[RMDB]
RNA sequence: GGGAACGACUCGAGUAGAGUCGAAAAGCGGGAUUCGUCCCGCCGUAUAUCCUAAGUCUCCAACUAUCGUCAUUGUCAGCGUGGGUCGGAAACGACCUAACGCUUGGAUUUAUGACGACGAAUUGGAGAUAUGGAAUUUGUAUGCUUUCGAGCAUAAUACUGGUUUUUAAUUCGUUAAAAACCAGUAAAAAGAAACAACAACAACAAC
Reactivity to DMS in 0.01 (KOAc 150mM, MgCl2 10mM, bicine 150mM(pH8.5), 24C), signal-to-noise 4, nucleotides 027 to 156: g010c000g030g020g010a060u000u010c300g010u000c000c000c000g040c010c020g010u000a090u000a100u010c000c010u010a070a250g010u000c000u000c010c000a010a030c050u000a080u000c000g020u000c020a010u000u000g010u000c020a040g010c000g070u000g010g010g010u010c000g020g010a140a110a300c010g010a020c000c010u000a020a010c010g020c000u010u010g030g000a030u000u000u000a020u000g000a030c000g010a010c030g010a040a080u000u000g000g000a050g020a010u000a020u000g010g000a060a230u010u010u000g000u010a070u000g000c020u000u000u000c070g000a150g010c040a060u000a100a230
Reactivity to 2A3 in 0.01 (KOAc 150mM, MgCl2 10mM, bicine 150mM(pH8.5), 24C), signal-to-noise 6, nucleotides 027 to 156: g010c000g000g000g030a040u100u130c170g070u020c050c000c000g010c000c000g000u120a150u030a040u120c000c000u040a120a030g010u000c000u010c000c010a010a020c080u040a010u060c000g010u000c010a010u000u020g020u010c010a000g000c000g000u010g010g010g000u000c010g030g010a090a040a040c010g010a000c000c000u040a090a040c000g010c000u000u050g020g000a000u040u240u240a010u020g000a000c000g000a000c040g090a250a300u000u010g010g010a010g000a000u010a010u010g020g030a010a050u120u080u230g060u060a040u010g000c020u150u100u230c300g110a010g000c040a010u060a050a060